[RMDB]
RNA sequence: GGGAACGACUCGAGUAGAGUCGAAAAGCGCCAGGAGAGGUUCCCGGAGCCGACCUUCCGGCUGGCCGCUCUGUGACUGCUUCCCGGCUCUGCCCUCUUGGCUGAAGUCCCCGCUGCCGGGCGCGGGGAUCAGAAUAGAAUUCGUUCUAUUCUGAUCAAAAGAAACAACAACAACAAC
Reactivity to DMS in 0.01 (KOAc 150mM, MgCl2 10mM, bicine 150mM(pH8.5), 24C), signal-to-noise 9, nucleotides 027 to 126: g010c140g010c000c000a020g000g000a030g000a100g020g010u010u010c080c030c010g000g000a050g020c040c030g000a100c100c050u010u010c060c020g000g000c040u000g000g000c020c050g010c060u010c050u010g010u010g000a080c100u010g000c070u000u000c020c040c010g000g000c030u000c040u010g010c010c010c020u010c020u000u000g000g010c010u020g010a080a140g010u010c010c000c000c000g010c000u000g000c000c010g000g000g010c300g010c010g000g000g000
Reactivity to 2A3 in 0.01 (KOAc 150mM, MgCl2 10mM, bicine 150mM(pH8.5), 24C), signal-to-noise 9, nucleotides 027 to 126: g080c040g010c010c010a010g020g020a040g020a040g010g020u080u120c020c010c000g000g000a020g020c030c030g070a140c020c050u120u080c050c010g020g010c020u030g030g010c010c010g030c020u040c030u050g160u090g060a110c050u070g020c010u070u040c010c010c000g010g000c020u020c020u050g020c000c000c000u020c020u020u040g030g000c050u070g050a050a010g060u040c000c000c000c000g000c020u050g010c010c000g020g000g010c020g000c010g010g010g010
Structure probing data (DMS and 2A3) for a 177-nucleotide construct. Conditions: 150 mM KOAc, 10 mM MgCl2 and 150 mM bicine (pH 8.5), 24 C. Reactivities are given for positions 27 through 126. It was measured as part of the RMDB libraries RFM100 and RFMREP.